[RMDB]
RNA sequence: GGGAACGACUCGAGUAGAGUCGAAAAAGUUUCCAAUUCGUUGGAAACUACUGUCGGAAUGCGGAAUAUAAAAUCCUCCGCUUAAGGAUUUUAGCGACUUAAAGUACACUAGUUUCGACUAGUGUAAGAAGUGUUCAUAGUUCGCUAUGAACACUUCAAAAGAAACAACAACAACAAC
Reactivity to DMS in 0.01 (KOAc 150mM, MgCl2 10mM, bicine 150mM(pH8.5), 24C), signal-to-noise 4, nucleotides 027 to 126: a280g010u000u000u000c000c000a000a030u000u000c140g010u000u000g000g000a020a000a010c000u010a050c030u000g000u000c020g010g010a120a070u020g010c020g000g010a070a050u000a110u010a030a010a040a020u000c070c010u000c180c200g030c190u000u000a100a030g010g010a030u000u000u000u000a060g000c040g010a040c030u000u010a050a060a110g010u000a010c000a000c000u000a010g000u000u000u010c140g020a030c010u000a010g010u000g010u000a010a020
Reactivity to 2A3 in 0.01 (KOAc 150mM, MgCl2 10mM, bicine 150mM(pH8.5), 24C), signal-to-noise 3, nucleotides 027 to 126: a000g010u010u000u000c000c000a010a010u050u040c160g040u040u000g000g000a010a000a000c000u020a050c040u080g050u060c020g030g130a170a050u120g020c020g000g060a040a020u140a020u050a100a090a010a030u050c010c020u020c020c040g100c110u030u070a050a020g020g010a030u000u040u010u200a060g040c030g040a030c020u110u160a240a040a060g080u010a030c000a000c000u010a010g020u030u040u080c080g050a010c000u000a010g010u000g000u010a000a000

Conditions: 150 mM KOAc, 10 mM MgCl2 and 150 mM bicine (pH 8.5), 24 C. This 177-nucleotide RNA was probed chemically with DMS and 2A3. The DMS profile rests on 3,891 reads. Source: RMDB library M2PK50, as collected in RNAgym. Reactivities are given for positions 27 through 126. 2A3 adducts were read by reverse transcription with SuperScript II with manganese. Values are in units of 0.01, from 0 to 300, in steps of 10.